[RMDB]
RNA sequence: GGGAACGACUCGAGUAGAGUCGAAAAUUGUGGUCAAGACCUUGGCGUAGUAUCCAAGGUUGUCAAGGUUCCUUUUGACUUAACAAUGAUUGAGUUUAUGUUAUGGUGUAAGGAUGGACAGGGGAAAACCUAAUUGCGAAUUCGUUCGCAAUUAGGUAAAAGAAACAACAACAACAAC
Reactivity to DMS in 0.01 (KOAc 150mM, MgCl2 10mM, bicine 150mM(pH8.5), 24C), signal-to-noise 5, nucleotides 027 to 126: u000u010g030u000g000g010u000c040a050a050g030a020c000c000u000u000g010g010c220g010u000a140g000u010a140u010c060c060a030a030g000g010u010u000g010u010c060a060a070g010g000u000u000c060c070u000u000u000u000g010a010c010u000u010a080a040c030a040a040u000g000a140u000u010g010a120g010u000u000u000a040u030g010u000u010a060u010g000g010u010g000u010a050a070g000g010a050u000g010g000a050c070a060g000g010g000g010a100a060a060
Reactivity to 2A3 in 0.01 (KOAc 150mM, MgCl2 10mM, bicine 150mM(pH8.5), 24C), signal-to-noise 2, nucleotides 027 to 126: u020u030g020u030g020g000u040c010a060a000g030a000c000c000u000u000g010g010c050g050u080a030g110u060a110u050c020c010a030a010g020g000u010u040g010u010c010a010a050g080g010u060u150c040c000u100u020u030u050g010a000c000u030u050a040a000c020a010a170u080g050a150u050u160g090a130g160u110u050u060a120u090g060u070u060a090u170g030g030u030g020u060a030a020g020g000a020u050g000g000a000c040a030g010g000g000g020a060a070a000
Annotation:
This 177-nucleotide RNA was probed chemically with DMS and 2A3. The reactions ran in a buffer of 150 mM KOAc, 10 mM MgCl2 and 150 mM bicine (pH 8.5), at 24 C.